[RMDB]
RNA sequence: GGGAACGACUCGAGUAGAGUCGAAAACAUAAGGAGGGUGACUGAAGCCUGCUCGGUAAGAGCAAAUCCCGUAACUGCGAACAACAUCGUACGUUUCUCCCGUCAAGCAGCCCCUGUUGCUGCCUGAAUCCGUACUUAGUUUCGACUAAGUACGGAUAAAAGAAACAACAACAACAAC
Reactivity to DMS in 0.01 (KOAc 150mM, MgCl2 10mM, bicine 150mM(pH8.5), 24C), signal-to-noise 8, nucleotides 027 to 126: c100a070u020a070a100g000g010a070g010g010g030u000g000a100c080u020g000a100a140g020c070c050u000g000c010u000c020g000g020u020a080a160g010a040g000c030a040a060a090u020c010c010c000g000u020a060a070c070u010g010c020g010a040a070c150a080a120c170a090u010c050g010u000a040c110g000u000u010u010c050u010c020c010c020g010u000c040a040a050g010c010a030g010c010c030c110c090u010g010u010u020g010c010u000g000c040c020u000g000a130
Reactivity to 2A3 in 0.01 (KOAc 150mM, MgCl2 10mM, bicine 150mM(pH8.5), 24C), signal-to-noise 9, nucleotides 027 to 126: c050a060u180a100a050g060g020a020g010g020g010u050g040a050c050u060g050a050a020g020c000c020u000g010c010u000c020g070g120u210a100a040g000a000g020c000a000a050a030u060c010c000c000g010u020a030a020c020u020g000c010g030a050a030c040a050a020c010a200u020c010g040u050a050c070g010u000u040u010c040u010c010c010c010g060u060c030a040a020g000c000a000g000c010c010c010c050u070g070u200u100g010c010u010g010c000c000u010g020a020